[RMDB]
RNA sequence: GGGAACGACUCGAGUAGAGUCGAAAAGAAACUCAGGAAACUGAGUGAAAUAAAAGACUCACACACAGUGAUCGAUGCGUCACGAAAUAAUCGCAAACGAAAUAAAGGUGUGUGAGUCGAAAGAAAAGGGAUAGCAUAUCUUCGGAUAUGCUAUCCCAAAAGAAACAACAACAACAAC
Reactivity to 2A3 in 0.01 (KOAc 150mM, MgCl2 10mM, bicine 150mM(pH8.5), 24C), signal-to-noise 2, nucleotides 027 to 126: g090a080a020a000c010u030c000a000g020g020a050a040a060c000u030g000a000g000u000g080a080a220a000u110a000a100a000a000g000a000c000u000c000a060c000a000c000a020c000a000g020u000g000a050u000c000g060a070u020g000c000g140u090c070a000c220g190a120a150a000u300a040a000u090c000g050c000a180a160a050c010g020a010a010a010u080a030a260a000g000g000u000g000u000g020u000g000a000g000u000c000g020a000a040a000g070a000a010a020a020
Reactivity to DMS in 0.01 (KOAc 150mM, MgCl2 10mM, bicine 150mM(pH8.5), 24C), signal-to-noise 1, nucleotides 027 to 126: g080a120a140a030c000u070c000a170g000g020a060a060a160c000u000g010a010g060u010g000a060a220a120u000a060a000a090a150g000a020c000u070c000a020c000a000c000a000c000a000g000u000g010a040u000c090g000a170u050g080c040g000u000c270a080c150g060a030a130a040u000a190a110u060c000g000c000a000a190a030c000g000a000a000a120u000a000a220a000g010g000u000g030u010g000u000g000a000g020u000c000g040a010a130a070g000a000a090a090a200